[RMDB]
RNA sequence: GGGAACGACUCGAGUAGAGUCGAAAAGAUAUGGAAGCCAGCUGGAGUCCCAAAAGUCUCGGAAACGAGCCAAAGCGGGACGUUGAAAGCUGUGCUUCCUAAGUCAAAAGACGGGUUCGCCCGUCAAUCAUUUUCAUAUCUUCGGAUAUGAAAAUGAAAAAGAAACAACAACAACAAC
Reactivity to 2A3 in 0.01 (KOAc 150mM, MgCl2 10mM, bicine 150mM(pH8.5), 24C), signal-to-noise 1, nucleotides 027 to 126: g000a000u020a000u020g010g000a000a000g000c020c000a000g020c000u020g020g020a000g000u000c020c010c000a010a020a010a040g030u040c010u000c000g000g000a000a000a000c010g000a000g030c010c000a080a040a000g250c260g000g010g000a000c010g010u070u020g000a010a010a000g000c000u000g010u010g000c000u000u000c010c000u000a000a000g000u000c000a000a040a000a230g000a000c000g000g040g000u050u090c240g100c060c000c000g000u000c000a000a010
Reactivity to DMS in 0.01 (KOAc 150mM, MgCl2 10mM, bicine 150mM(pH8.5), 24C), signal-to-noise 3, nucleotides 027 to 126: g000a000u000a020u000g000g000a020a000g010c000c000a000g010c000u000g010g020a050g020u000c000c000c000a090a080a080a090g000u000c000u000c010g020g010a010a010a020c000g010a020g000c040c030a050a120a180g000c270g010g010g010a010c000g020u010u010g000a140a170a060g000c000u000g000u010g000c000u000u000c010c010u000a000a060g000u010c000a090a100a090a150g010a000c000g010g000g010u000u010c300g020c000c000c000g010u000c000a010a080